[RMDB]
RNA sequence: GGGAACGACUCGAGUAGAGUCGAAAAAAUAAGUGCAGUUUUGCACUAUUCAUACUUAACAUUUGAACGUUCGUCUUAUUUGAAAAUUUUUUAUGAUUAGUAUUUUUAUUGCUAUUAGAUGUUAAAAGUGUUACCGAUAUUUCGAUAUCGGUAACACAAAAGAAACAACAACAACAAC
Reactivity to 2A3 in 0.01 (KOAc 150mM, MgCl2 10mM, bicine 150mM(pH8.5), 24C), signal-to-noise 1, nucleotides 027 to 126: a000a000u110a060a000g000u020g000c040a020g020u150u260u300u030g000c000a000c000u000a000u030u030c000a000u000a300c020u090u040a110a020c000a020u010u010u010g060a040a000c090g000u000u000c000g120u030c050u030u220a150u220u090u170g080a110a000a140a170u050u200u000u000u140u090a170u210g000a150u000u020a000g060u000a250u090u160u000u140u300a100u220u060g000c000u000a000u080u020a020g040a020u090g060u020u020a030a050a030a030
Structure probing data (2A3) for a 177-nucleotide construct. For 2A3 the reverse transcriptase was SuperScript II with manganese. The RNA was probed in 150 mM KOAc, 10 mM MgCl2 and 150 mM bicine (pH 8.5) at 24 C.